RNA sequence: GGGAACGACUCGAGUAGAGUCGAAAAACACGGAACUUCGGUUCCGUGUAUAGGGACGAAUUAACACGAUAGCGCUUGUCGCCCGAGCAAAAAGGCGGAAAAACUGCAUCCUCUUCGGAGGAUGCAAUCGCAAGGAAGAAUUCGUUCUUCCUUGCGAAAAAGAAACAACAACAACAAC
Reactivity to 2A3 in 0.01 (KOAc 150mM, MgCl2 10mM, bicine 150mM(pH8.5), 24C), signal-to-noise 2, nucleotides 027 to 126: a000c020a000c000g010g000a000a000c010u040u090c240g060g000u000u020c000c000g000u000g000u000a020u040a010g020g010g030a010c010g070a120a200u140u080a180a020c050a010c090g090a080u040a060g090c070g000c010u020u060g040u050c010g010c000c010c000g010a010g060c090a020a060a050a030a030g040g010c080g040g110a040a090a020a040a000c080u050g000c000a000u000c020c020u030c000u040u090c240g060g000a000g000g020a000u000g000c000a000a010
Reactivity to DMS in 0.01 (KOAc 150mM, MgCl2 10mM, bicine 150mM(pH8.5), 24C), signal-to-noise 2, nucleotides 027 to 126: a010c000a010c000g000g000a000a000c000u000u010c170g040g010u000u000c000c000g010u000g020u000a010u000a070g000g010g010a110c040g010a070a040u010u000a060a060c160a130c080g000a070u010a070g010c040g010c030u000u000g000u030c040g000c010c000c020g000a120g020c150a030a040a050a080a080g000g000c020g010g000a050a020a040a050a080c240u010g000c000a020u000c000c010u000c000u000u000c150g040g010a020g000g000a000u000g000c000a000a020